[RMDB]
RNA sequence: GGGAACGACUCGAGUAGAGUCGAAAAGAGACGUCAUAUGCGAGGUGCGACUUGGACACCCUUUGAGGAAUAAGGAUUAUAUCAUCCAACGUGAAGGGAACCACAUCCGUGCAUAAGGCAGCACCCAGCCAUAGUAAUCCUUCGGGAUUACUAUGGCAAAAGAAACAACAACAACAAC
Reactivity to DMS in 0.01 (KOAc 150mM, MgCl2 10mM, bicine 150mM(pH8.5), 24C), signal-to-noise 3, nucleotides 027 to 126: g000a210g030a120c060g060u000c020a070u000a040u000g000c000g000a050g040g000u010g000c140g010a120c220u000u010g000g000a060c190a240c000c020c010u030u000u000g000a130g030g000a140a070u040a140a200g010g000a060u010u000a130u010a180u040c140a060u000c000c000a040a140c070g020u000g020a020a010g010g000g010a120a180c050c010a100c100a100u010c010c070g020u000g000c000a030u020a030a030g010g000c050a130g000c040a070c020c020c020a120
Reactivity to 2A3 in 0.01 (KOAc 150mM, MgCl2 10mM, bicine 150mM(pH8.5), 24C), signal-to-noise 3, nucleotides 027 to 126: g070a000g010a020c040g000u030c000a010u040a020u060g010c010g030a040g050g020u060g030c120g070a090c030u030u060g030g020a020c010a170c140c030c000u010u010u050g130a140g000g170a200a130u190a230a070g020g020a030u100u080a200u090a060u280c070a010u000c000c000a000a050c070g050u130g110a000a000g000g000g000a020a020c010c000a010c000a040u040c000c020g100u060g010c000a010u010a020a030g040g000c010a020g040c020a080c000c000c000a000